RNA sequence: GGGAACGACUCGAGUAGAGUCGAAAACUAUCGGACAACGCGAAGCAUUUCGCGGCGGUCGCAUCGGCGCGUUACUGGCUUGCCGUUGCUGUCGAAUCUGAGAUCCGGGCGGCAGAAUGAAGCGCGAAAUCCUUUGCAAUCAUUUCGGCGGUAACUCUCAAGUUGUCCGAUUCGUCGGACAACUUGAAAAAGAAACAACAACAACAAC
Reactivity to 2A3 in 0.01 (KOAc 150mM, MgCl2 10mM, bicine 150mM(pH8.5), 24C), signal-to-noise 1, nucleotides 027 to 156: c040u080a060u140c040g010g030a020c000a040a000c130g010c020g060a040a010g040c050a090u000u000u000c000g000c000g050g080c070g110g020u050c000g000c040a000u020c000g100g000c040g000c000g050u040u170a050c040u200g140g030c020u000u220g040c040c000g080u000u060g020c010u000g000u020c010g000a010a110u000c040u090g100a000g000a160u000c060c010g010g000g000c000g000g020c020a030g020a010a090u180g020a250a000g000c000g000c000g020a010a010a010u050c020c000u050u000u080g020c030a080a090u000c020a040u070u140u130c110g040g000c060g030g000u060a070a050c000u020c000
Conditions: 150 mM KOAc, 10 mM MgCl2 and 150 mM bicine (pH 8.5), 24 C. Structure probing data (2A3) for a 207-nucleotide construct.